[RMDB]
An RNA of 177 nucleotides, treated with DMS and read out base by base.
Conditions: 150 mM KOAc, 10 mM MgCl2 and 150 mM bicine (pH 8.5), 24 C.
Reactivities are given for positions 27 through 126.
The data come from the RNA Mapping Database (RMDB), library OK2TRN.
DMS adducts were read by reverse transcription with MarathonRT.
RNA sequence: GGGAACGACUCGAGUAGAGUCGAAAAUGUUCCAGCCCCCGUUGGGUUCCAGGGCCUCAGGCCUCUGGGCCUUUUUCCGCCCACAGGUUCCGCUGGACGAGGGAUGGUGUCCACUUCAAACCCAAGGCACUGUAGACCCUUUCGAGGGUCUACAGUGAAAAGAAACAACAACAACAAC
Reactivity to DMS in 0.01 (KOAc 150mM, MgCl2 10mM, bicine 150mM(pH8.5), 24C), signal-to-noise 2, nucleotides 027 to 126: u020g000u020u000c000c010a090g000c050c040c010c010c000g020u000u020g010g010g000u000u010c030c010a030g030g010g010c060c020u000c220a100g020g030c030c030u000c090u000g000g010g020c020c010u030u000u010u010u000c090c170g000c030c010c030a040c120a000g000g050u000u020c080c090g010c050u010g000g000a050c040g000a070g010g010g010a040u000g020g010u000g010u000c040c050a180c120u000u010c110a100a100a210c010c000c040a130a100g020g000